[RMDB]
This 177-nucleotide RNA was probed chemically with 2A3 and DMS. High 2A3 reactivity points to a flexible backbone, as in loops and unpaired stretches.
RNA sequence: GGGAACGACUCGAGUAGAGUCGAAAAGCAUUACGGCCUUUACUACAACAAUGUAGUCCAUAGAUCAAACGAUUUCGUGGAUUGGAUUUCACUUGACUGUCUACGGCUCGAUUGCGUGUGCUCGGGGAUGUAGGUGCAUGUUCGCAUGCACCUACAUAAAAGAAACAACAACAACAAC
Reactivity to 2A3 in 0.01 (KOAc 150mM, MgCl2 10mM, bicine 150mM(pH8.5), 24C), signal-to-noise 3, nucleotides 027 to 126: g040c020a030u050u190a070c050g040g000c020c020u080u110u070a050c050u040a010c010a150a020c030a140a290u150g070u120a020g020u000c010c000a070u090a030g100a060u070c070a150a240a110c130g070a090u050u080u150c080g000u040g000g020a030u010u060g040g030a040u060u100u110c060a060c080u080u140g100a150c030u030g020u060c000u040a020c030g050g000c050u020c050g080a090u020u110g010c040g040u070g020u040g020c010u000c000g010g000g020g000
Reactivity to DMS in 0.01 (KOAc 150mM, MgCl2 10mM, bicine 150mM(pH8.5), 24C), signal-to-noise 4, nucleotides 027 to 126: g030c030a040u000u010a130c120g010g010c030c000u000u000u000a070c030u020a070c060a030a150c200a070a060u010g010u000a020g000u000c050c030a070u000a060g010a050u010c040a070a120a150c150g010a080u010u010u010c070g050u000g010g010a050u000u000g020g000a050u010u010u000c090a080c160u010u010g010a090c090u000g010u000c030u010a080c100g000g000c070u010c030g000a120u010u000g010c040g030u000g010u000g020c020u000c010g030g000g000g010